[RMDB]
RNA sequence: GGGAACGACUCGAGUAGAGUCGAAAAGGCACGCUCAUCCUUCAGCAGGUGAAGAUCAUCCUGGCGUCGUGCGGUGAGUACAUCGCCAUCGACAACUCCAGCACCCUGGCCACAUCGAGCGGGAUGGAUCCACCUGAUGUUUCGACAUCAGGUGGAUAAAAGAAACAACAACAACAAC
Reactivity to 2A3 in 0.01 (KOAc 150mM, MgCl2 10mM, bicine 150mM(pH8.5), 24C), signal-to-noise 3, nucleotides 027 to 126: g010g000c020a010c090g000c000u040c010a090u070c020c000u060u070c030a030g010c020a020g000g060u040g120a110a050g040a130u090c020a030u030c000c020u020g090g020c040g030u060c020g030u060g030c030g020g000u080g010a110g070u090a090c020a110u080c040g010c030c030a050u050c010g020a010c000a060a020c030u010c010c000a010g050c000a040c020c010c030u050g050g020c040c010a070c010a100u110c070g030a020g000c070g000g030g020a030u050g050g040
Reactivity to DMS in 0.01 (KOAc 150mM, MgCl2 10mM, bicine 150mM(pH8.5), 24C), signal-to-noise 4, nucleotides 027 to 126: g010g030c110a070c070g000c020u000c040a080u010c020c010u010u000c100a070g010c070a090g010g020u000g000a080a100g010a060u000c070a100u010c030c010u010g010g010c150g000u000c050g010u000g010c080g020g020u000g020a160g020u030a090c110a130u020c010g000c060c110a070u000c040g000a060c090a120a130c080u000c000c030a060g010c070a090c040c030c040u000g000g010c030c050a050c110a060u000c090g000a110g000c070g000g000g010a090u000g010g000

This 177-nucleotide RNA was probed chemically with 2A3 and DMS. Values are in units of 0.01, from 0 to 300, in steps of 10. For DMS, 2,962 sequencing reads were counted. The reactions ran in a buffer of 150 mM KOAc, 10 mM MgCl2 and 150 mM bicine (pH 8.5), at 24 C. The 2A3 profile rests on 3,525 reads.